RNA sequence: GGGAACGACUCGAGUAGAGUCGAAAAGAUAUGGAUCCCAUGACAUGUAAGUCGUCGGAAACGACGAUGGUUACAACAGCAUGAGGAUCCUAAGUCAAACACGCCUGAUACUUCGGUAUCAGGCGUGCCCUAGACUAGAGUUCGCUCUAGUCUAGGGAAAAGAAACAACAACAACAAC
Reactivity to 2A3 in 0.01 (KOAc 150mM, MgCl2 10mM, bicine 150mM(pH8.5), 24C), signal-to-noise 4, nucleotides 027 to 126: g010a000u020a010u050g000g010a000u000c010c020c020a000u010g040a090c120a130u300g010u060a050a040g010u000c010g000u000c000g000g010a020a010a020c020g000a000c010g020a010u040g050g040u090u060a070c090a300a060c040a300g020c010a010u030g020a240g150g000a000u000c000c000u000a000a000g010u010c020a040a230a050c020a000c010g000c000c000u000g000a010u020a010c010u060u110c300g170g000u010a000u000c000a000g030g010c000g000u000g000
Reactivity to DMS in 0.01 (KOAc 150mM, MgCl2 10mM, bicine 150mM(pH8.5), 24C), signal-to-noise 5, nucleotides 027 to 126: g000a020u000a110u000g000g000a010u010c000c000c000a010u000g010a070c070a160u000g020u000a050a180g000u000c000g010u000c000g010g000a030a030a060c000g030a020c000g000a000u010g020g010u010u000a020c030a130a140c300a170g000c000a010u000g000a140g030g010a010u000c000c000u000a000a080g010u000c020a180a130a300c020a000c000g000c010c000u000g010a020u010a000c000u000u010c200g020g000u000a010u000c000a010g000g010c010g010u000g000